RNA sequence: GGGAACGACUCGAGUAGAGUCGAAAAGAGGAUUCAACGAGCUUCGUAGCAACGAUAGCAACGUAGCUUUUGCUACGACCCGAGCUAUCGAGGGUAGCUACGUCCCUUGCUCGAGGGGAGAAUCCGAGGCCUGAUAGUCAUUCGUGACUAUCAGGCCAAAAGAAACAACAACAACAAC
Reactivity to 2A3 in 0.01 (KOAc 150mM, MgCl2 10mM, bicine 150mM(pH8.5), 24C), signal-to-noise 1, nucleotides 027 to 126: g190a070g020g000a010u020u020c040a040a080c040g030a000g020c020u050u100c010g030u020a000g020c010a070a060c000g050a020u020a000g010c000a070a100c000g000u010a000g000c000u120u150u240u300g020c000u030a020c010g040a030c090c000c000g070a060g000c000u010a000u020c000g010a050g110g080g080u080a050g020c000u020a010c000g050u060c010c000c000u060u150g010c020u010c020g030a060g080g030g080g020a050g010a030a010u000c000c010g020a080
Reactivity to DMS in 0.01 (KOAc 150mM, MgCl2 10mM, bicine 150mM(pH8.5), 24C), signal-to-noise 2, nucleotides 027 to 126: g010a300g000g000a030u000u000c000a140a110c100g000a060g000c060u000u010c040g040u000a000g000c020a200a140c000g020a010u030a000g000c030a170a170c000g020u000a000g000c010u020u000u000u000g020c000u000a000c000g010a150c180c090c150g000a160g010c030u000a000u000c010g000a080g060g000g000u040a090g020c020u010a010c000g000u000c010c040c070u000u010g020c010u020c010g000a070g000g020g000g000a290g010a030a040u000c000c000g000a130